[RMDB]
RNA sequence: GGGAACGACUCGAGUAGAGUCGAAAAACACCUGACUAGGCGUACGCGCCUAGUCCGGUGAGGGUCAGACGAGCAGACACCCAUUGAAGUUCUGCUCUACCGUUAAAAGGAAGUAAACCAUCAUGAAAGAAGUGCGCUUGGUUCGCCAAGCGCACAAUCAUUCCUAAUAGUUCGCUAUUAGGAAUGAAAAAGAAACAACAACAACAAC
Reactivity to DMS in 0.01 (KOAc 150mM, MgCl2 10mM, bicine 150mM(pH8.5), 24C), signal-to-noise 1, nucleotides 027 to 156: a110c000a050c010c000u010g020a030c030u000a010g020g080c000g060u040a110c300g020c040g000c020c000u000a010g000u000c000c030g010g020u000g070a050g000g040g000u010c020a120g000a140c110g000a030g000c010a020g000a070c020a020c000c040c010a230u000u000g010a030a040g000u000u010c010u000g000c030u000c000u000a030c000c010g000u010u000a080a110a090a160g000g020a150a080g030u000a050a060a070c040c010a190u030c110a150u010g000a090a110a100g010a120a120g030u000g000c020g000c040u000u000g010g010u000u010c300g000c010c020a030a020g050c010g050c000a000c010a020a050
Reactivity to 2A3 in 0.01 (KOAc 150mM, MgCl2 10mM, bicine 150mM(pH8.5), 24C), signal-to-noise 3, nucleotides 027 to 156: a000c000a000c000c000u000g000a000c000u000a000g000g020c010g020u010a020c250g010c010g010c090c000u010a000g000u000c010c010g000g000u000g010a080g000g010g000u010c040a040g030a180c010g010a030g000c000a000g000a000c000a000c010c010c040a060u020u190g070a040a000g030u060u020c000u000g000c000u000c000u000a000c000c010g030u030u130a110a090a010a050g060g060a100a030g060u140a060a110a080c080c040a040u190c050a100u160g160a070a080a060g090a160a040g040u000g000c000g010c000u020u020g000g030u070u120c150g010c080c000a010a020g000c000g000c000a000c000a000a000

The record gives the reactivity of an RNA of 207 nucleotides to DMS and 2A3. Reactivities are given for positions 27 through 156. It was measured as part of the RMDB library M2RFPK. For 2A3 the reverse transcriptase was SuperScript II with manganese. For DMS, 1,987 sequencing reads were counted. 2A3 is a SHAPE reagent: it acylates the 2'-hydroxyl of flexible nucleotides of all four kinds. Conditions: 150 mM KOAc, 10 mM MgCl2 and 150 mM bicine (pH 8.5), 24 C.